Conditions: 150 mM KOAc, 10 mM MgCl2 and 150 mM bicine (pH 8.5), 24 C. This 177-nucleotide RNA was probed chemically with 2A3 and DMS.
[RMDB]
RNA sequence: GGGAACGACUCGAGUAGAGUCGAAAAUUCGGGACCAGUAAGGGACCGUGUACAGGAUCGAGUACGGAACCAGUACGGGAACAGUAAGGGACCGAGUACGGGAUCGAGUACGGGACCAGUACGGGACAUUUUAUCACCUAUUCGUAGGUGAUAAAAUAAAAGAAACAACAACAACAAC
Reactivity to 2A3 in 0.01 (KOAc 150mM, MgCl2 10mM, bicine 150mM(pH8.5), 24C), signal-to-noise 9, nucleotides 027 to 126: u060u030c010g020g020g030a020c010c020a080g120u200a120a170g050g000g020a030c000c020g010u030g010u040a050c040a040g060g040a130u030c030g030a030g100u080a070c060g040g010a030a040c010c000a010g020u030a010c010g010g010g050a110a050c030a050g090u250a150a190g050g000g010a020c010c000g010a030g020u020a030c000g050g040g070a130u020c010g010a010g010u050a090c000g010g030g000a010c010c000a010g030u030a030c040g020g000g050a010c020
Reactivity to DMS in 0.01 (KOAc 150mM, MgCl2 10mM, bicine 150mM(pH8.5), 24C), signal-to-noise 9, nucleotides 027 to 126: u020u020c020g010g010g000a140c000c000a130g010u020a120a100g000g000g000a230c000c010g000u010g020u010a020c050a080g000g010a080u010c020g020a270g020u000a060c070g010g000a070a100c000c020a080g030u010a020c020g000g000g020a190a190c050a130g000u030a110a090g010g000g010a280c010c010g000a110g030u000a030c020g000g000g000a090u000c020g000a270g000u010a030c000g000g000g000a170c010c010a090g000u010a030c060g000g010g000a090c140
It was measured as part of the RMDB library OK1LIB. Reactivities are rounded to 0.1 and cut off at 0 and 3. Values cover nucleotides 27 to 126. 2A3 adducts were read by reverse transcription with SuperScript II with manganese. DMS adducts were read by reverse transcription with MarathonRT.